[RMDB]
RNA sequence: GGGAACGACUCGAGUAGAGUCGAAAACCAGGUAAACGUUUGCCUACACACACCCUAAUCGCAACAUCAGGGUUGCGGCACGCCGGAAAAACGACACGGAACGUCAGGAAGGGGUCAAUGGCCGUUAGACACUUUUGUAUUUCGAUACAAAAGUGUCAAAAGAAACAACAACAACAAC
Reactivity to 2A3 in 0.01 (KOAc 150mM, MgCl2 10mM, bicine 150mM(pH8.5), 24C), signal-to-noise 8, nucleotides 027 to 126: c010c000a020g020g090u120a080a070a060c080g020u030u120u060g030c000c010u090a030c050a000c000a000c000a030c080c010c010u080a080a080u120c020g000c030a010a040c010a080u200c090a060g230g080g000u000u020g010c010g020g000c020a020c040g030c000c010g040g050a090a020a020a010a020c060g040a020c040a010c080g040g050a160a040c030g040u040c030a020g050g080a090a060g020g020g000g020u030c040a030a080u050g040g000c010c000g010u020u030a040
Reactivity to DMS in 0.01 (KOAc 150mM, MgCl2 10mM, bicine 150mM(pH8.5), 24C), signal-to-noise 6, nucleotides 027 to 126: c000c000a070g000g030u010a060a070a080c090g010u010u010u010g020c020c000u010a130c210a140c150a080c150a070c000c000c000u000a090a100u020c070g000c060a020a050c050a080u020c210a110g010g010g000u000u010g000c040g020g010c100a050c090g010c020c020g000g000a050a040a050a120a120c110g000a060c110a060c040g010g000a100a040c100g010u020c080a080g000g010a100a070g000g000g000g010u000c080a060a070u000g000g020c030c050g020u010u020a120
An RNA of 177 nucleotides, treated with 2A3 and DMS and read out base by base. DMS adducts were read by reverse transcription with MarathonRT. Conditions: 150 mM KOAc, 10 mM MgCl2 and 150 mM bicine (pH 8.5), 24 C. For 2A3 the reverse transcriptase was SuperScript II with manganese.